Chemical mapping of a 207-nucleotide RNA with 2A3 and DMS.
Values are in units of 0.01, from 0 to 300, in steps of 10.
For DMS, 3,386 sequencing reads were counted.
Source: RMDB library M2RFPK, as collected in RNAgym.
For DMS the reverse transcriptase was MarathonRT.
[RMDB]
RNA sequence: GGGAACGACUCGAGUAGAGUCGAAAAUCCGGCGGUAAAUCAACUCAGUUGAAAGCCGCGAGCGCUUUGGGUGCGAACUCAAAGGACAGCAGAUCCGGUGUAAUUCCGGGGCCGACGGUUAGAGUCCAAAAGAGGUUAUCGUUCGCGAUAACCUCAAGUAUCAGUCUAAGUUCGCUUAGACUGAUACAAAAGAAACAACAACAACAAC
Reactivity to 2A3 in 0.01 (KOAc 150mM, MgCl2 10mM, bicine 150mM(pH8.5), 24C), signal-to-noise 2, nucleotides 027 to 156: u010c010c020g030g000c000g000g010u090a170a150a180u050c040a040a000c080u120c300a190g020u020u020g040a090a070a020g040c000c000g000c020g010a020g000c010g020c010u040u040u040g030g000g000u030g030c060g010a100a030c010u000c010a010a000a010g040g050a050c030a040g040c010a010g020a090u050c000c000g030g000u020g040u050a040a080u120u030c000c000g010g010g000g060c040c040g030a040c010g030g000u020u060a040g020a050g120u030c000c030a000a060a080a060g010a000g000g010u010u000a000u010c010g000u040u080c270g000c000g100a000u000a000a000c000c000u000c000a000a000
Reactivity to DMS in 0.01 (KOAc 150mM, MgCl2 10mM, bicine 150mM(pH8.5), 24C), signal-to-noise 2, nucleotides 027 to 156: u000c000c000g010g010c000g000g000u000a030a150a220u000c050a060a110c010u000c060a200g060u020u010g020a080a130a300g010c020c030g000c030g000a120g070c000g000c000u000u010u010g010g000g020u000g000c270g000a240a020c030u010c020a000a010a060g010g020a080c030a150g000c010a100g020a130u000c040c010g010g040u000g000u000a130a300u000u000c000c020g050g010g000g000c000c000g020a050c030g010g000u000u010a160g000a230g000u020c010c030a020a010a110a160g000a020g020g020u000u000a000u000c000g010u000u000c300g010c000g030a010u000a010a020c010c000u000c000a010a050